[RMDB]
RNA sequence: GGGAACGACUCGAGUAGAGUCGAAAAGAAAGAAAGAAGAAUCACCAGGAGGCAAGGAUCCUCAACUACGUUAUUCGGGCACCUUGAGUUGAGAGGAGCUAGUGGUGCGCCCGGCCUGGAGAUCAAAGCUAGAAUAUUUUUUCGAAAAUAUUCUAGCAAAAGAAACAACAACAACAAC
Reactivity to DMS in 0.01 (KOAc 150mM, MgCl2 10mM, bicine 150mM(pH8.5), 24C), signal-to-noise 6, nucleotides 027 to 126: g010a110a080a100g010a090a080a090g010a120a110g010a140a030u000c010a070c010c010a010g010g020a090g000g010c030a300a210g020g000a030u010c060c010u000c010a020a020c020u010a080c110g000u020u020a100u030u020c020g000g010g000c000a030c030c010u000u030g000a040g020u000u000g010a030g000a030g000g010a010g000c010u000a050g010u000g000g000u000g010c030g030c070c010c020g010g000c020c000u000g000g010a080g000a030u010c040a090a070a120
Reactivity to 2A3 in 0.01 (KOAc 150mM, MgCl2 10mM, bicine 150mM(pH8.5), 24C), signal-to-noise 9, nucleotides 027 to 126: g140a020a080a000g100a050a090a020g140a050a010g040a050a020u020c010a010c030c000a000g010g010a050g030g000c020a060a200g030g000a010u010c000c000u010c000a010a010c010u300a120c050g150u230u090a070u100u120c010g030g050g000c010a010c020c000u110u250g020a010g010u010u020g010a020g000a010g010g000a010g000c000u030a020g070u020g080g000u010g000c010g010c010c010c000g000g010c000c000u010g000g010a040g000a000u030c040a030a070a000

Source: RMDB libraries RFM100 and RFMREP, as collected in RNAgym. Structure probing data (DMS and 2A3) for a 177-nucleotide construct. The reactions ran in a buffer of 150 mM KOAc, 10 mM MgCl2 and 150 mM bicine (pH 8.5), at 24 C. DMS adducts were read by reverse transcription with MarathonRT. In probing experiments dimethyl sulfate is read out at A N1 and C N3, which are open when not base-paired.